The data come from the RNA Mapping Database (RMDB), library OK3TST. Structure probing data (DMS and 2A3) for a 207-nucleotide construct. DMS adducts were read by reverse transcription with MarathonRT. The RNA was probed in 150 mM KOAc, 10 mM MgCl2 and 150 mM bicine (pH 8.5) at 24 C.
RNA sequence: GGGAACGACUCGAGUAGAGUCGAAAAUGACACAUAUACAUGCACGCUAUUGGUUCUGCUUCACUGGAGAACACUCGGAAGAAUUGAAUAAUGCAGUAAGUUCAGGAGAACUUUCUGGAUGAAUAUAUCCAUCACUGGCUAGGACUACUGAGAGUGAUCCAUCUAUCCCUUUCGAGGGAUAGAUGGAAAAAGAAACAACAACAACAAC
Reactivity to DMS in 0.01 (KOAc 150mM, MgCl2 10mM, bicine 150mM(pH8.5), 24C), signal-to-noise 2, nucleotides 027 to 156: u010g030a130c080a100c050a150u000a160u020a130c040a100u010g030c040a030c060g000c040u060a120u010u030g000g010u000u000c060u000g000c090u000u000c040a090c070u010g030g010a130g010a090a140c060a090c090u000c000g010g020a180a110g020a090a070u000u000g020a050a110u000a120a090u010g000c000a040g060u000a020a020g010u000u000c030a080g000g000a300g000a050a040c020u000u000u000c020u010g010g000a020u000g010a110a120u000a120u010a080u000c030c020a030u000c050a080c040u000g010g080c030u020a110g020g030a140c050u010a080c030u000g020a170g010a100g030u000g010a200
Reactivity to 2A3 in 0.01 (KOAc 150mM, MgCl2 10mM, bicine 150mM(pH8.5), 24C), signal-to-noise 5, nucleotides 027 to 156: u120g040a010c020a000c030a110u120a000u050a150c060a050u070g040c050a020c060g010c020u060a070u120u120g030g010u040u010c010u040g100c020u090u060c060a100c130u050g040g030a040g010a050a000c030a030c070u050c060g030g040a060a020g030a110a090u070u100g030a060a070u120a080a060u140g050c000a000g020u020a050a010g010u030u010c040a050g040g120a210g100a110a020c020u030u050u030c030u030g020g040a020u010g040a090a000u160a020u030a010u180c020c000a000u030c010a000c060u020g040g010c010u030a020g000g030a030c030u030a010c010u070g050a020g000a010g090u040g040a030